Chemical mapping of a 177-nucleotide RNA with 2A3.
The reactions ran in a buffer of 150 mM KOAc, 10 mM MgCl2 and 150 mM bicine (pH 8.5), at 24 C.

[RMDB]
RNA sequence: GGGAACGACUCGAGUAGAGUCGAAAAACAAUCUGAUACAAACUCCUCUGGGUCCUUCUUAGCUGCAACACAAAAGCUUUCAAAAUUUAGAAGAUUCCAGCGUUUAGCAAUUUCCGACCCAAUGCCGCAGGAUCCUGAGUUUCGACUCAGGAUCCUGAAAAGAAACAACAACAACAAC
Reactivity to 2A3 in 0.01 (KOAc 150mM, MgCl2 10mM, bicine 150mM(pH8.5), 24C), signal-to-noise 2, nucleotides 027 to 126: a020c040a000a030u050c000u090g120a000u030a190c070a020a290a000c000u000c000c020u000c010u000g010g000g010u000c050c000u110u000c070u000u040a060g000c070u080g000c030a290a010c000a130c000a050a080a000a000g000c020u040u130u080c140a220a300a220a140u070u130u100a080g000a050a000g050a030u050u110c000c000a030g020c030g000u000u150u170a000g010c020a020a060u110u050u020c000c090g000a030c000c000c030a000a160u090g000c000c000g000
The 2A3 profile rests on 423 reads. For 2A3 the reverse transcriptase was SuperScript II with manganese.